Source: RMDB library OK1LIB, as collected in RNAgym. This 177-nucleotide RNA was probed chemically with DMS and 2A3. 2A3 adducts were read by reverse transcription with SuperScript II with manganese. For DMS, 802 sequencing reads were counted. For 2A3, 641 sequencing reads were counted. The RNA was probed in 150 mM KOAc, 10 mM MgCl2 and 150 mM bicine (pH 8.5) at 24 C. High 2A3 reactivity points to a flexible backbone, as in loops and unpaired stretches. DMS adducts were read by reverse transcription with MarathonRT. Reactivities are given for positions 27 through 126.
RNA sequence: GGGAACGACUCGAGUAGAGUCGAAAAGACAAGAAUAAGAGGGACAAGAAUCUGACCUGCAGCUCCUCGUGGUGUCACUCGGAAACGUGCUCAACGCGCGUCCGACGCAGGCAGAAAGUAAGAAGAAGACGUCCUAUGCAUUCGUGCAUAGGACGUCAAAAGAAACAACAACAACAAC
Reactivity to DMS in 0.01 (KOAc 150mM, MgCl2 10mM, bicine 150mM(pH8.5), 24C), signal-to-noise 1, nucleotides 027 to 126: g060a110c280a010a100g000a090a010u000a040a130g000a140g000g000g000a100c140a050a050g000a050a140u040c000u000g000a110c100c020u000g050c130a140g000c090u090c010c030u000c060g060u000g030g000u140g090u040c030a110c080u000c000g000g000a000a070a030c010g100u000g000c000u060c300a140a080c120g000c000g000c170g000u010c000c010g000a090c080g000c080a190g000g000c000a030g000a030a200a080g070u000a100a150g010a130a090g050a190a040
Reactivity to 2A3 in 0.01 (KOAc 150mM, MgCl2 10mM, bicine 150mM(pH8.5), 24C), signal-to-noise 2, nucleotides 027 to 126: g080a030c000a000a000g110a120a110u110a100a040g040a020g010g000g080a000c080a060a090g130a030a150u060c060u000g090a240c000c000u050g030c000a030g000c000u000c000c110u260c000g060u150g000g020u150g090u100c000a000c100u070c000g020g040a020a130a020c020g000u000g000c050u150c270a080a100c010g030c090g000c000g060u000c000c000g000a000c110g030c000a000g000g030c010a000g000a000a000a000g110u300a180a000g050a000a020g020a040a030